RNA sequence: GGGAACGACUCGAGUAGAGUCGAAAAUGGUGAGAAAAAUGACAUUAUCUUGGAAUCAAUGGAAUUCCCAGAGCCAGUUAUUCACUUAUCAGUAGAGCCAAAAUCUAAAGCUGACCAAGAUAAAAUGUGAUUACAACUAGUUCGCUAGUUGUAAUCAAAAAGAAACAACAACAACAAC
Reactivity to DMS in 0.01 (KOAc 150mM, MgCl2 10mM, bicine 150mM(pH8.5), 24C), signal-to-noise 5, nucleotides 027 to 126: u010g000g000u000g000a100g000a020a080a090a070a040u010g010a100c060a130u010u020a090u000c000u000u000g000g000a170a060u030c110a140a080u020g010g010a070a060u010u000c010c000c030a080g000a110g000c150c120a070g010u000u000a020u000u010c040a170c050u000u010a070u010c010a030g010u020a050g000a110g000c080c130a050a040a110a090u020c070u020a050a070a170g000c050u010g000a090c020c000a040a040g000a040u010a030a030a080a100u040g010
Reactivity to 2A3 in 0.01 (KOAc 150mM, MgCl2 10mM, bicine 150mM(pH8.5), 24C), signal-to-noise 9, nucleotides 027 to 126: u050g000g010u070g010a100g140a050a090a050a040a040u120g030a030c030a050u060u090a050u090c000u000u000g000g020a050a030u070c060a070a240u170g080g020a060a040u040u010c000c000c010a010g010a000g060c030c010a010g010u030u070a030u050u020c040a040c080u060u080a040u080c010a030g100u150a030g050a010g080c060c040a100a150a030a090u050c060u110a150a100a020g020c020u010g020a040c000c010a020a010g020a020u100a050a110a010a010u180g040
This 177-nucleotide RNA was probed chemically with DMS and 2A3. It was measured as part of the RMDB library OK1LIB. Reactivities are given for positions 27 through 126. DMS adducts were read by reverse transcription with MarathonRT. The reactions ran in a buffer of 150 mM KOAc, 10 mM MgCl2 and 150 mM bicine (pH 8.5), at 24 C.